[RMDB]
RNA sequence: GGGAACGACUCGAGUAGAGUCGAAAACAGGUGGGAAAUUCGGUGGAACACAGUGGAGCCUUGUCCUCCGGGUUAAUGUCGCUUUUGGCAUUGGCCCCUGCUCCUGAGAGAAGAAAUAUACUGGGGAACCAGUCUUUACCGACCGUUGUUAUCAGAACUACGUUCCAUAGUUCGCUAUGGAACGUAGAAAAGAAACAACAACAACAAC
Reactivity to 2A3 in 0.01 (KOAc 150mM, MgCl2 10mM, bicine 150mM(pH8.5), 24C), signal-to-noise 2, nucleotides 027 to 156: c050a020g020g040u010g040g050g040a020a090a070u130u070c080g030g020u110g000g080a120a010c050a000c010a140g090u080g050g000a010g000c040c020u120u100g060u000c030c020u070c050c020g000g000g000u000u020a040a000u010g000u000c030g050c180u070u180u150u300g010g000c000a000u000u000g000g020c000c010c000c000u020g000c010u000c000c010u040g010a040g010a000g000a090a000g040a030a120a000u200a050u030a110c060u040g060g000g030g030a000a050c000c000a040g060u000c030u120u190u140a100c030c010g040a010c000c060g000u000u000g000u040u020a210u120c000a020g020a110a030